[RMDB]
RNA sequence: GGGAACGACUCGAGUAGAGUCGAAAAGAUAUGGAGCAGGUCAAUCUUGGAUUUAACACCCCACGAAACUACUUCGGAAACGAAGUAGGUCCCGUGGGGUGUUUGUCAGAUUGUCUGCUCCUAAGUCCUACAUGUAUUUGUUCGCAAAUACAUGUAGAAAAGAAACAACAACAACAAC
Reactivity to 2A3 in 0.01 (KOAc 150mM, MgCl2 10mM, bicine 150mM(pH8.5), 24C), signal-to-noise 2, nucleotides 027 to 126: g030a000u100a070u190g010g000a010g030c020a010g000g230u300c010a040a030u030c050u300u300g200g060a190u300u300u040a020a000c010a020c000c000c000c000a010c000g020a070a040a040c000u010a020c000u000u030c010g080g000a020a030a110c020g000a000a020g000u000a000g040g040u070c030c050c000g030u030g000g060g000g000u010g020u000u000u020g000u000c000a010g010a000u000u000g000u000c000u000g010c000u000c000c000u000a000a000g010u000c000
Reactivity to DMS in 0.01 (KOAc 150mM, MgCl2 10mM, bicine 150mM(pH8.5), 24C), signal-to-noise 6, nucleotides 027 to 126: g010a100u010a300u000g000g010a010g020c000a010g010g010u020c000a010a000u000c000u000u010g030g010a030u010u010u010a020a010c000a010c000c010c000c000a010c010g000a060a060a190c000u000a010c000u000u000c010g010g000a150a130a290c000g010a010a010g010u000a000g010g000u010c230c120c020g030u000g000g000g000g010u000g010u010u000u000g000u000c010a030g010a020u000u000g000u000c000u000g000c000u000c010c000u000a000a080g000u000c040